RNA sequence: GGGAACGACUCGAGUAGAGUCGAAAAGGAACAAGUAGAACUAGGCGCCUCGAGGGUAUACAUAUUUCAUUAGUGAAUAUAACGGACCCAGCAGGGGACAUUCUCUGGUGAACUGCAACCAAUCGGCGUAAACCUAUAGAUUCGUCUAUAGGUUUACAAAAGAAACAACAACAACAAC
Reactivity to DMS in 0.01 (KOAc 150mM, MgCl2 10mM, bicine 150mM(pH8.5), 24C), signal-to-noise 8, nucleotides 027 to 126: g010g010a110a060c070a080a060g010u010a040g010a130a090c090u010a110g010g000c170g020c030c010u000c040g010a170g010g010g020u000a050u010a140c100a050u000a020u000u010u000c020a090u010u010a120g010u010g000a020a020u000a050u010a110a150c160g000g000a080c010c000c000a060g020c220a150g010g010g000g020a040c060a080u000u000c040u000c020u010g000g020u000g010a080a070c070u000g010c090a060a090c040c050a050a070u000c070g000g000c240
Reactivity to 2A3 in 0.01 (KOAc 150mM, MgCl2 10mM, bicine 150mM(pH8.5), 24C), signal-to-noise 2, nucleotides 027 to 126: g080g020a080a040c050a120a050g060u070a040g070a090a000c030u030a050g140g000c060g040c070c000u030c030g010a090g000g050g020u060a040u020a110c030a010u080a060u080u090u050c040a060u070u180a060g070u060g090a030a010u060a010u020a120a070c110g100g020a020c010c000c000a010g070c040a030g020g000g010g010a000c010a020u120u000c060u010c010u010g000g020u010g030a060a030c020u010g000c020a010a040c000c020a020a130u040c040g040g010c010
The data come from the RNA Mapping Database (RMDB), library OK2TRN. The record gives the reactivity of an RNA of 177 nucleotides to DMS and 2A3. Reactivities are rounded to 0.1 and cut off at 0 and 3. The reactions ran in a buffer of 150 mM KOAc, 10 mM MgCl2 and 150 mM bicine (pH 8.5), at 24 C. The 2A3 profile rests on 3,425 reads. For DMS, 9,147 sequencing reads were counted. DMS adducts were read by reverse transcription with MarathonRT. 2A3 adducts were read by reverse transcription with SuperScript II with manganese.